[RMDB]
RNA sequence: GGGAACGACUCGAGUAGAGUCGAAAAUCUCUGGAGGUGACCCAGGGGACCUGCAGGGACAGCAGCCUGGCUCGGGGAGACCUGGAGCAGUGUCCUGAGAAUUGCACAGGCAACGCAAAGGCACUGUGUGGAGAUGAGUGUGACCUGCUGGAGGAAACAGCUAAAAUUAUUUCGAUAAUUUUAGCUGAAAAGAAACAACAACAACAAC
Reactivity to 2A3 in 0.01 (KOAc 150mM, MgCl2 10mM, bicine 150mM(pH8.5), 24C), signal-to-noise 2, nucleotides 027 to 156: u050c010u010c010u010g060g070a050g020g050u050g050a080c000c030c030a030g020g010g010g040a030c010c010u020g020c040a050g000g000g060a010c020a030g040c020a000g040c010c020u060g060g000c020u020c050g020g000g020g010a080g020a050c000c020u030g090g010a020g010c000a010g020u020g050u090c010c010u040g030a050g050a100a110u070u030g010c030a050c100a190g290g000c020a000a030c060g010c080a040a030a000g050g000c010a030c080u000g010u010g010u090g090g020a040g020a060u150g000a020g080u090g020u090g070a040c000c010u050g000c010u020g070g030a020g030g000a050a150a010
Reactivity to DMS in 0.01 (KOAc 150mM, MgCl2 10mM, bicine 150mM(pH8.5), 24C), signal-to-noise 2, nucleotides 027 to 156: u000c010u010c020u000g020g030a140g020g000u000g000a100c080c050c040a080g010g020g000g020a110c080c020u000g000c040a070g000g000g010a090c020a140g000c090a100g000c010c030u000g030g000c030u000c030g000g010g010g030a180g010a130c020c010u000g020g000a200g040c040a040g030u000g010u000c010c000u000g000a300g010a060a090u000u000g000c030a180c170a170g040g020c050a000a030c070g000c090a050a170a060g010g040c000a020c000u000g010u000g020u000g030g030a080g010a150u000g000a110g030u010g030u000g010a100c040c010u010g010c000u000g000g010a110g020g000a180a120a200